[RMDB]
RNA sequence: GGGAACGACUCGAGUAGAGUCGAAAAACAUGUACUCCAGCGCGGAGGCUUCCGCCUCGUUGAUCCAACCGGUUCCGGUGCUCGUGGCCACUGCCACAACGGCGCGGCGCAAGCCACCGGUGCGCGCCGACGCUAACUAGUUCGCUAGUUAGCGUCGAAAAGAAACAACAACAACAAC
Reactivity to 2A3 in 0.01 (KOAc 150mM, MgCl2 10mM, bicine 150mM(pH8.5), 24C), signal-to-noise 9, nucleotides 027 to 126: a000c070a070u150g030u140a080c040u030c060c040a040g000c010g000c010g030g020a030g020g000c010u150u030c060c050g000c000c000u010c010g020u010u050g070a190u060c090c040a040a040c030c010g110g020u300u160c140c010g010g010u040g010c050u070c130g010u020g110g010c020c070a230c200u260g000c010c010a060c050a120a060c090g010g000c000g000c020g010g000c010g000c000a000a000g010c020c010a020c010c010g020g030u050g010c030g000c010g010c010
Reactivity to DMS in 0.01 (KOAc 150mM, MgCl2 10mM, bicine 150mM(pH8.5), 24C), signal-to-noise 9, nucleotides 027 to 126: a070c150a090u010g010u000a080c080u000c040c090a170g010c030g020c020g010g010a060g020g010c020u000u000c290c100g010c000c000u000c020g010u000u000g010a120u010c150c110a110a040c030c030g010g010u010u010c090c010g010g010u000g010c090u000c120g020u000g010g010c000c150a080c190u020g020c000c000a060c110a100a110c150g000g010c020g010c110g000g010c020g010c140a030a030g010c070c020a060c020c010g010g010u000g010c020g010c050g020c090
An RNA of 177 nucleotides, treated with 2A3 and DMS and read out base by base. The reactions ran in a buffer of 150 mM KOAc, 10 mM MgCl2 and 150 mM bicine (pH 8.5), at 24 C. 2A3 adducts were read by reverse transcription with SuperScript II with manganese. For 2A3, 130,074 sequencing reads were counted.